[RMDB]
Source information: An RNA of 177 nucleotides, treated with 2A3 and DMS and read out base by base.

RNA sequence: GGGAACGACUCGAGUAGAGUCGAAAACCGGGUUGCCCGCCAUCCAGGUAUAGGUACGGGUCGAGCUGAGCCAUUGCAGGAACAGAUAGACCGCCUCGGGAUGCUGCGACUGCGACGAGAUCCAGGCUACUAUCGAUUACUUCGGUAAUCGAUAGUAAAAAGAAACAACAACAACAAC
Reactivity to 2A3 in 0.01 (KOAc 150mM, MgCl2 10mM, bicine 150mM(pH8.5), 24C), signal-to-noise 8, nucleotides 027 to 126: c000c000g000g040g000u020u050g040c010c010c010g010c010c000a010u020c010c010a050g100g020u140a140u120a200g030g030u080a120c150g070g000g000u020c010g000a060g080c010u020g020a010g010c010c000a100u120u240g050c130a120g010g030a050a040c000a010g030a020u140a040g060a030c000c010g040c020c010u060c040g040g000g000a020u060g010c040u050g010c020g050a050c050u070g010c020g020a030c020g020a020g000a030u030c020c010a020g050g020c010
Reactivity to DMS in 0.01 (KOAc 150mM, MgCl2 10mM, bicine 150mM(pH8.5), 24C), signal-to-noise 6, nucleotides 027 to 126: c000c010g010g010g010u000u010g000c030c080c030g030c080c020a060u010c020c040a070g000g030u020a080u020a040g020g020u020a080c130g020g010g010u010c030g010a110g020c020u000g000a080g010c020c030a100u030u040g020c140a120g000g000a050a070c010a030g000a090u010a190g000a060c030c020g000c070c040u000c070g010g000g000a060u010g000c080u020g000c040g000a130c060u010g000c050g000a050c030g000a090g010a090u010c030c040a060g010g010c120
About this RNA
Conditions: 150 mM KOAc, 10 mM MgCl2 and 150 mM bicine (pH 8.5), 24 C.